This 177-nucleotide RNA was probed chemically with 2A3 and DMS. In probing experiments dimethyl sulfate is read out at A N1 and C N3, which are open when not base-paired. The data come from the RNA Mapping Database (RMDB), library TTRINS. The RNA was probed in 150 mM KOAc, 10 mM MgCl2 and 150 mM bicine (pH 8.5) at 24 C. The DMS profile rests on 10,981 reads. Reactivities are given for positions 27 through 126.
[RMDB]
RNA sequence: GGGAACGACUCGAGUAGAGUCGAAAAGAUAUGGAACUUUAGCAUACGAGAUGAGCGUGGAACUACGCUAUCUAAUCGGAAACGAUUAGUAAGGCGCCACGCUGAGUAUGCUAAAGUUCCUAAGUCAUCAUUACUAUACCUUCGGGUAUAGUAAUGAAAAAGAAACAACAACAACAAC
Reactivity to 2A3 in 0.01 (KOAc 150mM, MgCl2 10mM, bicine 150mM(pH8.5), 24C), signal-to-noise 3, nucleotides 027 to 126: g000a000u020a020u060g000g000a000a010c000u000u000u020a000g000c000a010u020a010c020g060a100g200a300u300g110a130g010c010g020u030g000g030a100a040c210u300a050c300g010c000u000a020u080c010u000a000a000u000c000g000g000a020a030a000c000g000a010u000u010a000g020u010a130a230g090g010c020g010c000c000a000c000g000c000u010g000a000g000u000a000u000g000c030u000a000a000a000g000u000u000c000c000u000a000a000g000u010c000a000
Reactivity to DMS in 0.01 (KOAc 150mM, MgCl2 10mM, bicine 150mM(pH8.5), 24C), signal-to-noise 7, nucleotides 027 to 126: g010a020u000a110u010g000g000a010a010c000u000u000u000a010g000c000a010u000a000c010g010a250g020a290u010g010a040g010c010g020u000g000g020a080a020c140u010a300c020g010c000u000a300u010c000u000a010a000u000c000g010g000a040a020a060c000g000a010u000u000a000g010u040a080a300g010g000c000g020c010c010a010c000g010c000u000g000a040g010u000a000u000g000c000u000a000a010a000g010u000u000c000c000u000a000a050g000u000c020a240